Overview:
This 170-nucleotide RNA was probed chemically with 2A3 and DMS.

RNA sequence: GGGAACGACUCGAGUAGAGUCGAAAACCGUCCCCUCGGUAAUGGCGAAUGGGACCCAGAACUCUCUCUAGAUUCCCAGAGAGAAUCGAGAGAAAACUGGCUCUCCCUUAGCCAUCCGAGUGGACGUCAACCCCGCGGUUCGCCGCGGGGAAAAGAAACAACAACAACAAC
Reactivity to 2A3 in 0.01 (KOAc 150mM, MgCl2 10mM, bicine 150mM(pH8.5), 24C), signal-to-noise 1, nucleotides 027 to 129: c020c000g000u000c000c010c000c010u010c000g030g030u090a100a060u000g000g000c000g030a040a010u010g000g000g000a060c080c000c010a010g030a070a050c030u000c000u000c000u000c000u040a060g020a000u000u000c010c030c130a010g090a010g000a000g000a100a000u020c000g010a000g000a010g000a020a020a010a000c000u000g000g000c000u000c000u000c010c010c000u010u020a000g000c000c000a000u000c000c000g000a000g010u010g000g000a000c000g030u080c010a040a120
Reactivity to DMS in 0.01 (KOAc 150mM, MgCl2 10mM, bicine 150mM(pH8.5), 24C), signal-to-noise 1, nucleotides 027 to 129: c100c000g020u000c000c000c030c000u050c000g060g010u000a040a010u010g000g000c020g050a130a040u070g010g040g010a040c300c000c000a000g020a160a220c210u000c000u000c000u000c000u030a040g010a030u100u000c000c050c170a300g020a080g000a300g040a040a020u000c000g020a100g220a000g030a040a030a000a160c000u000g010g000c010u000c040u030c020c000c000u020u010a000g010c000c000a000u020c010c000g040a000g060u000g000g000a030c050g010u020c000a060a020
Source information
Reactivities are rounded to 0.1 and cut off at 0 and 3. 2A3 adducts were read by reverse transcription with SuperScript II with manganese. The DMS profile rests on 3,403 reads. The 2A3 profile rests on 5,530 reads. It was measured as part of the RMDB library 15KLIB. For DMS the reverse transcriptase was MarathonRT.